[RMDB]
Source: RMDB library M2PK90, as collected in RNAgym. The record gives the reactivity of an RNA of 177 nucleotides to DMS. The reactions ran in a buffer of 150 mM KOAc, 10 mM MgCl2 and 150 mM bicine (pH 8.5), at 24 C. DMS adducts were read by reverse transcription with MarathonRT.

RNA sequence: GGGAACGACUCGAGUAGAGUCGAAAAUGAAAUAACUAGCAUGCAUAAGACGAGGUAGAGCGCGCGCUCUACCAAAAGAUGUGUGUAAAAACGCACGUGUUGGCGCGGCUACACAAAUAAACAAAAACAAAGCUAGAUGGUUCGCCAUCUAGCUUUGAAAAGAAACAACAACAACAAC
Reactivity to DMS in 0.01 (KOAc 150mM, MgCl2 10mM, bicine 150mM(pH8.5), 24C), signal-to-noise 1, nucleotides 027 to 126: u000g000a120a120a110u010a060a190c200u000a090g020c000a020u040g030c020a050u000a180a010g020a030c080g000a230g000g050u000a010g000a050g020c000g000c300g000c200g010c020u000c020u000a000c000c000a000a100a040a110g020a050u000g020u010g050u000g000u020a000a030a040a110a060c040g000c020a020c070g000u000g000u010u000g020g000c120g000c020g000g060c060u000a000c120a040c180a020a110a030u000a070a070a000c030a010a040a090a040a060